[RMDB]
RNA sequence: GGGAACGACUCGAGUAGAGUCGAAAAAUCUUACAACAGGCUAAUAAGUCUGUUGGUAUUAUAUCUAUGCCUUUGGGAUAUGUGUCUCAUGGUUUAGACUUAAUGCAAGCAGGGAGUGUCGUGCGUACAAGACAAUCUAGUUCGCUAGAUUGUCUUGAAAAGAAACAACAACAACAAC
Reactivity to 2A3 in 0.01 (KOAc 150mM, MgCl2 10mM, bicine 150mM(pH8.5), 24C), signal-to-noise 3, nucleotides 027 to 126: a000u000c000u000u040a030c000a020a000c000a000g010g010c000u030a110a080u120a300a150g000u000c000u000g010u000u000g010g000u010a010u030u040a020u000a020u000c000u010a020u030g020c000c000u070u090u060g020g000g020a020u070a090u280g300u160g020u020c010u000c010a020u000g000g000u000u000u010a010g000a000c010u020u040a010a020u040g020c030a030a040g000c000a020g010g030g050a070g050u040g040u060c040g020u030g020c010g000u020a060
Reactivity to DMS in 0.01 (KOAc 150mM, MgCl2 10mM, bicine 150mM(pH8.5), 24C), signal-to-noise 4, nucleotides 027 to 126: a080u010c020u000u000a250c010a000a010c000a010g000g000c000u000a180a120u020a110a050g030u000c000u010g000u000u000g000g000u010a010u000u000a020u000a100u000c010u000a020u000g010c010c000u000u010u000g010g010g010a020u010a090u020g030u010g010u010c010u000c010a030u000g010g000u000u000u000a010g000a020c060u000u010a020a010u000g010c060a100a080g020c110a080g010g010g000a090g010u000g010u000c050g020u000g010c100g020u010a150
Notes: This 177-nucleotide RNA was probed chemically with 2A3 and DMS. The data come from the RNA Mapping Database (RMDB), library 15KREP. As a SHAPE reagent, 2A3 marks flexible, mostly unpaired nucleotides at the ribose 2'-OH. For 2A3, 3,591 sequencing reads were counted. For 2A3 the reverse transcriptase was SuperScript II with manganese.